Structure probing data (2A3 and DMS) for a 177-nucleotide construct. The DMS profile rests on 10,148 reads. The RNA was probed in 150 mM KOAc, 10 mM MgCl2 and 150 mM bicine (pH 8.5) at 24 C.
RNA sequence: GGGAACGACUCGAGUAGAGUCGAAAAUGCUGAGCUUUCGAGCUCAGCAGAGGCAAGCAAGCAGCGCAACGAGACAAGACGAGGAUAAGAUCGAGCAUGCUACAAUACGGCACUUCGGUGCCGUAAAGUUAUAAUGGACUUUCGAGUCCAUUAUAACAAAAGAAACAACAACAACAAC
Reactivity to 2A3 in 0.01 (KOAc 150mM, MgCl2 10mM, bicine 150mM(pH8.5), 24C), signal-to-noise 6, nucleotides 027 to 126: u020g000c000u000g010a000g000c010u040u080u210c240g090a010g000c010u000c000a010g000c000a010g000a000g020g020c050a020a050g010c020a040a010g010c010a010g010c020g000c060a040a070c040g030a010g030a080c030a080a020g070a060c050g050a040g080g010a060u070a160a070g030a070u050c020g000a020g030c020a010u080g020c000u050a050c020a030a070u030a070c010g000g000c010a000c020u050u070c220g080g000u010g000c020c010g000u000a010a000a000
Reactivity to DMS in 0.01 (KOAc 150mM, MgCl2 10mM, bicine 150mM(pH8.5), 24C), signal-to-noise 7, nucleotides 027 to 126: u000g010c000u000g000a010g010c000u000u010u010c170g010a030g030c000u000c000a010g010c010a010g000a080g010g000c070a060a070g020c080a100a070g010c030a030g010c060g000c050a040a060c070g010a070g000a060c070a070a050g010a080c090g010a070g000g000a080u000a070a070g000a100u000c050g010a080g000c040a060u000g010c090u000a060c100a070a140u000a010c000g000g000c000a010c000u000u010c190g010g010u000g000c000c000g000u000a000a010a070